[RMDB]
RNA sequence: GGGAACGACUCGAGUAGAGUCGAAAAGACUACGGGUUCGCCCGUAGUCACUUACCGAGAAUGCGACUCGGUAUAUAACGCAAAGCCUUGGAAACAAGGGAAUCACCAGUUCCUUCGGGAACUGGAACCCAUGCUACAUCUUCGGAUGUAGCAUGGGAAAAGAAACAACAACAACAAC
Reactivity to DMS in 0.01 (KOAc 150mM, MgCl2 10mM, bicine 150mM(pH8.5), 24C), signal-to-noise 1, nucleotides 027 to 126: g010a000c000u000a000c010g000g010g030u000u010c200g010c000c000c000g000u010a010g000u010c000a000c110u000u000a200c080c010g020a000g000a130a160u010g010c160g000a020c000u000c000g000g030u020a010u000a010u060a130a040c080g030c090a010a130a090g010c010c000u000u070g030g000a170a120a210c000a020a000g010g010g000a050a080u000c210a130c020c000a000g000u000u000c000c000u000u000c240g040g000g020a010a000c000u000g000g050a010a040